[RMDB]
RNA sequence: GGGAACGACUCGAGUAGAGUCGAAAAGAUAUGGAUGACGUUGAUCGUUUCAGACGUUGAUCGUGAGAAAAAGCUCGGAAACGAGCUUUUUCUCACGGGAGUCUGUGACGGGAGUCAUCCUAAGUCAGUACUAUAACAACUUCGGUUGUUAUAGUACAAAAGAAACAACAACAACAAC
Reactivity to DMS in 0.01 (KOAc 150mM, MgCl2 10mM, bicine 150mM(pH8.5), 24C), signal-to-noise 2, nucleotides 027 to 126: g000a070u010a300u010g000g010a030u000g010a010c000g020u000u000g010a070u010c010g000u000u000u010c010a010g020a010c000g020u010u030g020a040u010c020g010u000g000a080g000a020a010a020a070a000g020c000u000c000g050g010a120a120a230c000g020a030g010c000u000u000u000u000u000c000u000c010a020c020g010g000g010a080g030u000c000u000g030u010g000a010c010g000g000g000a070g010u010c000a010u000c000c000u000a010a060g010u010c070a160